[RMDB]
RNA sequence: GGGAACGACUCGAGUAGAGUCGAAAAGGAUGCAGACGCAGCUUGGUUGGAACGGGGCAUAUUUGAUAUCAUUGUGGUGGGAAGUAUGCAUAACGAGGGAUUUCUUUACUCAGCUACCUCAAGGGAAGCCUAAUGGAUCGUUCGCGAUCCAUUAGGCAAAAGAAACAACAACAACAAC
Reactivity to DMS in 0.01 (KOAc 150mM, MgCl2 10mM, bicine 150mM(pH8.5), 24C), signal-to-noise 1, nucleotides 027 to 126: g000g010a130u000g030c030a090g000a100c060g030c070a030g000c100u010u010g030g000u010u000g000g020a050a110c180g010g000g000g010c110a060u000a020u000u000u000g000a200u000a080u010c140a190u010u000g050u000g000g000u000g000g010g000a110a130g000u000a010u010g010c060a120u010a150a100c060g000a060g000g000g000a130u000u020u010c050u000u000u000a080c150u000c040a090g000c050u000a080c000c000u000c100a020a090g010g000g000a090a120
Conditions: 150 mM KOAc, 10 mM MgCl2 and 150 mM bicine (pH 8.5), 24 C. Chemical mapping of a 177-nucleotide RNA with DMS. The DMS profile rests on 845 reads.